[RMDB]
RNA sequence: GGGAACGACUCGAGUAGAGUCGAAAAGGCGCGACUCUCGGUGAAAGAGGCACUCCUGGGCGAUGUGCAGUGGUAUCUCCAGGUCGAGAAGUGCCUUGCCGCACUGCCGCUGCAGCUCGUUGAUGUAAAUUAUCGGAUGAUUCGUCAUCCGAUAAUUAAAAGAAACAACAACAACAAC
Reactivity to DMS in 0.01 (KOAc 150mM, MgCl2 10mM, bicine 150mM(pH8.5), 24C), signal-to-noise 8, nucleotides 027 to 126: g020g010c110g010c020g010a070c030u000c020u000c030g010g030u010g020a090a120a120g010a050g010g020c030a080c050u000c020c010u010g000g000g010c080g000a050u010g010u000g010c010a020g020u000g010g010u010a060u000c030u000c010c050a090g010g010u010c120g000a080g000a200a110g010u000g010c010c010u010u010g010c130c110g000c050a040c050u000g000c010c020g010c010u000g000c010a060g010c060u000c040g000u000u000g010a120u010g000u010a070
Reactivity to 2A3 in 0.01 (KOAc 150mM, MgCl2 10mM, bicine 150mM(pH8.5), 24C), signal-to-noise 4, nucleotides 027 to 126: g100g000c050g000c020g120a050c030u000c000u010c040g030g070u130g140a140a080a040g070a020g020g000c010a010c030u040c000c000u010g000g030g020c080g050a050u080g010u020g110c010a010g000u030g050g000u040a090u060c030u000c010c030a060g050g090u130c090g060a030g040a130a020g020u020g000c010c000u000u070g040c040c000g020c020a030c040u060g010c020c010g010c010u010g000c000a050g040c020u030c040g040u060u080g080a140u130g030u180a040